[RMDB]
RNA sequence: GGGAACGACUCGAGUAGAGUCGAAAAACGCAACUCAGCCCCUAGCCACGUCGUCCGAGAGGAGUCAGUCUGGGGUUUUGGGCAGAUACUGCCGCUUCUCUUCCUGCUGCAACCAGCAGCCGCGACGCUGACAGAUCUAAUUCGUUAGAUCUGUCAGAAAAGAAACAACAACAACAAC
Reactivity to DMS in 0.01 (KOAc 150mM, MgCl2 10mM, bicine 150mM(pH8.5), 24C), signal-to-noise 9, nucleotides 027 to 126: a110c120g020c110a090a100c060u010c050a100g020c080c010c010c020u000a060g010c070c160a140c080g000u000c030g010u000c040c030g010a160g010a130g010g010a060g010u010c060a100g010u000c050u010g000g000g000g010u000u000u000u000g020g000g020c030a040g010a140u010a070c080u000g010c030c030g010c060u010u000c020u000c030u000u000c060c030u000g020c020u000g000c070a100a130c210c120a130g010c010a020g020c030c100g010c040g000a060c130g010
Reactivity to 2A3 in 0.01 (KOAc 150mM, MgCl2 10mM, bicine 150mM(pH8.5), 24C), signal-to-noise 4, nucleotides 027 to 126: a010c040g010c050a030a040c030u030c060a030g010c010c010c000c000u040a030g070c040c020a060c050g030u040c000g090u020c030c040g030a040g010a030g050g010a010g030u050c030a020g030u030c040u060g010g000g030g000u020u020u090u060g020g030g000c000a010g020a090u180a160c050u040g010c010c020g010c020u050u000c010u000c000u070u050c020c020u010g000c000u000g000c020a100a240c070c030a150g000c010a000g010c010c020g050c030g010a040c040g010
An RNA of 177 nucleotides, treated with DMS and 2A3 and read out base by base. The DMS profile rests on 12,683 reads. For DMS the reverse transcriptase was MarathonRT.